Structure probing data (2A3 and DMS) for a 177-nucleotide construct. DMS adducts were read by reverse transcription with MarathonRT. The RNA was probed in 150 mM KOAc, 10 mM MgCl2 and 150 mM bicine (pH 8.5) at 24 C. It was measured as part of the RMDB library M2PK50. 2A3 is a SHAPE reagent: it acylates the 2'-hydroxyl of flexible nucleotides of all four kinds. Reactivities are given for positions 27 through 126.
RNA sequence: GGGAACGACUCGAGUAGAGUCGAAAAUCCUCUAUCUUCGGAUAGAGGAAAAGAGCUAGCAGGUACCGCUAGCAAAGAAAAGGUAGCAAGACGGAAACGUCAAAACGAAGGGGUUCGCCCCUUCGAACGAUCCAAUAUAGUUCGCUAUAUUGGAUCGAAAAGAAACAACAACAACAAC
Reactivity to 2A3 in 0.01 (KOAc 150mM, MgCl2 10mM, bicine 150mM(pH8.5), 24C), signal-to-noise 6, nucleotides 027 to 126: u000c000c000u010c000u000a010u000c000u020u030c100g080g000a000u010a010g000a020g000g010a030a030a010a020g050a020g000c000u000a000g000c070a070g140g080u070a050c020c020g000c010u010a000g000c040a020a020a010g030a000a050a000a010g060g010u060a040g120c090a160a050g020a010c010g030g000a060a050a010c010g010u010c020a000a020a000a050c010g010a000a000g000g010g010g010u030u060c170g140c010c000c000c030u000u000c000g000a010a000
Reactivity to DMS in 0.01 (KOAc 150mM, MgCl2 10mM, bicine 150mM(pH8.5), 24C), signal-to-noise 6, nucleotides 027 to 126: u000c000c000u000c000u000a010u000c000u000u010c200g040g010a010u000a000g010a020g010g000a010a010a060a090g020a190g010c010u000a000g010c010a120g000g020u000a040c070c030g010c010u000a000g010c010a030a080a080g000a040a020a030a060g000g000u000a040g010c090a180a110g010a030c010g000g000a090a050a130c010g010u000c020a070a060a080a170c020g000a010a000g000g000g010g010u000u010c200g000c010c000c000c010u000u000c000g000a030a070